Structure probing data (2A3 and DMS) for a 177-nucleotide construct. Conditions: 150 mM KOAc, 10 mM MgCl2 and 150 mM bicine (pH 8.5), 24 C. For DMS the reverse transcriptase was MarathonRT. For 2A3, 727 sequencing reads were counted. The data come from the RNA Mapping Database (RMDB), library OK2TRN.
[RMDB]
RNA sequence: GGGAACGACUCGAGUAGAGUCGAAAACGAGGAGAGAAUCCUAAGGUGAGCGGGAGAACUCUCGUUAAGGAACUCGGCAAAAUGACCCCGUAACUUAGGGAGAAGGGGUGCUCUACGGAGUAGAGCCUGAGAAGUCUCAGUUCGCUGAGACUUCUCAAAAAGAAACAACAACAACAAC
Reactivity to 2A3 in 0.01 (KOAc 150mM, MgCl2 10mM, bicine 150mM(pH8.5), 24C), signal-to-noise 1, nucleotides 027 to 126: c000g000a000g090g050a080g000a000g040a100a060u000c020c010u010a070a040g060g080u060g130a030g040c020g070g010g000a070g040a240a170c020u020c000u000c060g080u050u110a040a020g060g040a040a060c040u040c000g080g000c130a120a110a050a110u300g030a120c000c010c000c000g050u050a030a020c000u000u100a080g030g120g000a020g050a030a050g050g000g000g000u010g000c000u000c000u020a020c020g140g040a100g020u010a010g000a010g080c010c020
Reactivity to DMS in 0.01 (KOAc 150mM, MgCl2 10mM, bicine 150mM(pH8.5), 24C), signal-to-noise 1, nucleotides 027 to 126: c030g000a060g010g000a080g000a090g000a110a140u000c010c000u000a050a040g010g020u010g020a070g060c060g000g000g010a030g000a120a170c040u010c020u000c010g010u000u000a070a100g010g040a090a150c040u000c020g010g020c140a030a050a050a080u020g000a130c030c000c020c020g010u000a100a180c040u000u000a060g030g020g020a030g000a060a200g000g000g030g010u000g010c020u000c000u010a010c000g000g000a070g000u000a010g020a040g030c020c240